Source: RMDB library TTRDES, as collected in RNAgym. Structure probing data (2A3 and DMS) for a 177-nucleotide construct. The reactions ran in a buffer of 150 mM KOAc, 10 mM MgCl2 and 150 mM bicine (pH 8.5), at 24 C. The DMS profile rests on 1,671 reads. The 2A3 profile rests on 2,727 reads.

RNA sequence: GGGAACGACUCGAGUAGAGUCGAAAAGAUAUGGACGCAGUACCGAGCUGUACUCGGAAACGAGUAUACAGCCUAGACAGUACGCGUCCUAAGUCAAAGUACGGUGUGUGUUCGCACACACCGUACACAUUUUUCACGACUUCGGUCGUGAAAAAUGAAAAGAAACAACAACAACAAC
Reactivity to 2A3 in 0.01 (KOAc 150mM, MgCl2 10mM, bicine 150mM(pH8.5), 24C), signal-to-noise 1, nucleotides 027 to 126: g040a000u020a010u090g010g000a010c020g000c080a100g020u030a010c000c070g030a060g000c000u000g000u030a010c010u000c020g000g180a000a060a000c030g030a010g020u080a140u040a200c000a010g020c000c030u130a130g040a120c010a040g000u010a000c000g000c020g010u030c030c000u010a060a030g000u000c080a180a010a110g010u010a010c000g030g010u000g000u040g000u000g020u040u130c270g080c170a000c020a000c000a010c000c000g000u000a000c000a000
Reactivity to DMS in 0.01 (KOAc 150mM, MgCl2 10mM, bicine 150mM(pH8.5), 24C), signal-to-noise 2, nucleotides 027 to 126: g010a090u020a250u000g010g000a040c000g030c000a100g050u000a000c000c020g040a160g020c020u010g030u000a010c000u000c000g020g000a050a060a100c000g000a010g010u000a150u000a040c000a000g010c000c300u010a070g020a180c300a060g010u000a000c000g000c000g000u000c000c000u000a000a050g020u000c020a100a080a100g000u000a000c010g030g030u020g050u000g030u000g010u000u030c220g020c020a000c010a000c000a010c000c020g000u000a000c000a050